Notes: This 177-nucleotide RNA was probed chemically with DMS.
RNA sequence: GGGAACGACUCGAGUAGAGUCGAAAAUUAAUGAGGACCAAAUGGCUGUAAAGCCCGUAAAGCUCGAAAUGGUCCUAAACAGCCAAAUCGGGCAAAUCGAGCAAUCCCAACGACAGCGACAAAACAAUGCUCUUUAUGAGUUCGCUCAUAAAGAGCAAAAAGAAACAACAACAACAAC
Reactivity to DMS in 0.01 (KOAc 150mM, MgCl2 10mM, bicine 150mM(pH8.5), 24C), signal-to-noise 1, nucleotides 027 to 126: u000u050a080a090u000g000a080g000g010a030c070c040a050a060a060u010g000g000c030u000g000u040a150a120a160g000c000c010c140g070u000a170a060a110g000c000u000c010g010a030a060a300u000g010g000u000c010c000u000a070a070a210c240a210g000c030c000a010a030a300u000c040g010g000g000c000a030a300a070u000c000g010a020g000c030a120a070u000c000c000c000a130a110c170g010a060c100a000g000c020g040a040c160a040a030a030a130c120a090a090